[RMDB]
RNA sequence: GGGAACGACUCGAGUAGAGUCGAAAAACCUUUGUGCCAUAGGAGUAUGUGUAGGGAGCUCCCACUCUCCCAUUGGGAGAGUGUGAGCGAAGAACUACAUGAAACUAUGGCACUCUGGUAAAACUGCCAGUAGCUGAUUCGUCAGCUACUGGCAGAACCAAUGUAAUCCCUUCGGGGAUUACAUUGGAAAAGAAACAACAACAACAAC
Reactivity to 2A3 in 0.01 (KOAc 150mM, MgCl2 10mM, bicine 150mM(pH8.5), 24C), signal-to-noise 2, nucleotides 027 to 156: a000c030c000u030u000u010g000u000g000c000c000a000u000a010g010g010a010g020u030a040u300g010u040g010u010a010g000g000g020a000g000c000u020c030c040c000a000c000u000c010u020c010c050c130a210u240u300g010g000g000a010g000a000g020u000g010u000g000a000g000c010g000a060a030g020a020a010c000u000a000c000a010u020g000a000a010a010c000u000a000u000g000g000c000a000c000u000c000u010g000g000u020a030a050a040a100c000u000g030c000c000a000g000u000a000g000c010u000g000a060u040u110c240g050u020c160a000g000c010u000a010c000u000g000g000c000a000g000a000a000
Chemical mapping of a 207-nucleotide RNA with 2A3.
For 2A3, 2,511 sequencing reads were counted.
It was measured as part of the RMDB library RNAMAK.